[RMDB]
RNA sequence: GGGAACGACUCGAGUAGAGUCGAAAAGCGUGGGGAAUCUUUACCGGCUGAUGCGCGGCUAUGCCACCGGCGGUUAUGUCGGUACACCGGGCAGCAUGGCAGACAGCCGGUCGCAGGCGUCCGGGACAAAUAAUUCUCCAUUCGUGGAGAAUUAUUUAAAAGAAACAACAACAACAAC
Reactivity to DMS in 0.01 (KOAc 150mM, MgCl2 10mM, bicine 150mM(pH8.5), 24C), signal-to-noise 4, nucleotides 027 to 126: g020c080g030u000g010g000g010g000a130a070u010c060u010u000u000a080c020c000g010g010c020u000g000a140u000g010c070g030c090g020g010c040u000a050u010g020c030c050a150c020c010g000g020c020g010g010u010u020a070u010g000u010c070g010g000u000a060c110a100c030c050g010g000g030c100a100g010c050a050u000g000g020c010a080g020a140c050a050g010c010c010g010g010u000c080g010c140a050g000g000c140g010u010c050c060g000g000g000a080c140
Reactivity to 2A3 in 0.01 (KOAc 150mM, MgCl2 10mM, bicine 150mM(pH8.5), 24C), signal-to-noise 2, nucleotides 027 to 126: g010c040g020u050g020g000g000g000a020a060u020c010u060u130u080a050c000c010g010g000c010u000g010a060u090g010c240g020c010g070g010c050u070a040u120g020c000c040a040c000c020g000g010c050g030g060u300u150a140u300g070u060c050g000g000u010a030c030a010c000c020g000g030g000c010a000g000c020a060u110g060g000c000a010g080a300c040a010g000c010c010g000g000u000c010g060c010a040g140g050c020g050u050c030c040g000g000g020a000c010

Source information
Source: RMDB library OK2TST, as collected in RNAgym. This 177-nucleotide RNA was probed chemically with DMS and 2A3. Values cover nucleotides 27 to 126.